The record gives the reactivity of an RNA of 207 nucleotides to 2A3 and DMS. For DMS, 3,683 sequencing reads were counted. It was measured as part of the RMDB library OK3TST. Values cover nucleotides 27 to 156.

RNA sequence: GGGAACGACUCGAGUAGAGUCGAAAAUUGACACCAUUUUCUCACCUUCAACAGUGUAUGGUAGCUGGAUGUUUUGGAUGUUUUCAAAAUAAACACCUAUUUGUAGCUAUGUUUUUAGAUUCAUCUCUAAUGCUGCACUCACGGGAAAAAAUCAGCACCAUUACCCUAAGUUCGCUUAGGGUAAUGGAAAAGAAACAACAACAACAAC
Reactivity to 2A3 in 0.01 (KOAc 150mM, MgCl2 10mM, bicine 150mM(pH8.5), 24C), signal-to-noise 3, nucleotides 027 to 156: u110u070g030a020c000a020c050c040a030u030u010u110u040c030u010c020a070c040c030u170u170c060a070a100c040a100g020u030g040u100a070u110g030g040u020a010g000c030u030g030g050a080u050g080u010u060u060u070g090g000a120u020g040u040u020u050u080c060a100a110a050a050u100a040a050a000c020a020c020c020u040a090u050u100u110g170u050a010g020c040u040a050u130g070u060u110u000u030u030a070g010a060u090u080c020a070u030c040u000c000u060a020a020u040g020c010u010g000c020a010c050u040c010a050c050g040g000g000a050a030a020a010a000a050u130c050a030g040c010a010
Reactivity to DMS in 0.01 (KOAc 150mM, MgCl2 10mM, bicine 150mM(pH8.5), 24C), signal-to-noise 2, nucleotides 027 to 156: u010u010g020a140c060a090c020c030a120u000u000u000u010c000u000c020a080c100c040u000u000c070a130a080c040a040g020u000g010u010a090u010g050g000u000a060g030c020u000g000g000a100u000g000u000u000u000u010g010g010a010u000g000u000u000u010u020c060a090a070a110a140u000a040a040a020c030a030c010c010u000a120u000u010u000g020u010a070g020c050u000a090u020g000u010u010u010u010u010a040g030a100u010u000c120a110u030c120u010c010u000a030a050u000g000c030u000g000c020a180c100u000c040a050c080g050g000g030a010a010a090a040a060a070u000c030a080g030c060a220